[RMDB]
RNA sequence: GGGAACGACUCGAGUAGAGUCGAAAAAUAGCGCAGGCCUGCAAUAAACCGCUCGCGUAAAGCAUUUAGCGGCUCAUGUUCGUACUCUAUGGCCUGACUGGGCUGAAUCAAAUCUCUAAGCGGCGGCGUCAUAUGGGGCUUUCGAGCCCCAUAUGACAAAAGAAACAACAACAACAAC
Reactivity to 2A3 in 0.01 (KOAc 150mM, MgCl2 10mM, bicine 150mM(pH8.5), 24C), signal-to-noise 2, nucleotides 027 to 126: a000u120a000g070c030g000c050a000g070g010c010c000u040g000c040a050a090u090a210a100a080c000c000g000c110u230c080g010c020g060u090a160a040a000g080c100a080u030u040u180a020g090c040g040g000c010u020c000a030u190g040u110u070c030g000u100a110c060u000c120u180a170u180g050g030c030c000u010g000a000c000u000g000g000g000c010u010g060a000a030u140c060a020a020a030u000c020u010c000u060a000a100g010c000g000g020c000g000g000c000
Reactivity to DMS in 0.01 (KOAc 150mM, MgCl2 10mM, bicine 150mM(pH8.5), 24C), signal-to-noise 1, nucleotides 027 to 126: a110u000a240g000c100g000c000a030g030g000c000c040u000g020c090a110a040u030a050a130a290c030c030g000c010u030c150g000c020g030u030a130a080a160g020c160a090u050u020u000a100g000c030g030g000c000u030c060a080u030g000u000u050c090g000u000a030c070u000c210u020a050u010g050g010c170c040u030g020a090c030u000g010g000g010c000u000g000a000a020u000c070a010a030a000u000c050u010c050u000a120a140g110c050g020g000c050g020g100c140
Structure probing data (2A3 and DMS) for a 177-nucleotide construct.
In probing experiments dimethyl sulfate is read out at A N1 and C N3, which are open when not base-paired.
It was measured as part of the RMDB library OK1LIB.
The 2A3 profile rests on 798 reads.
As a SHAPE reagent, 2A3 marks flexible, mostly unpaired nucleotides at the ribose 2'-OH.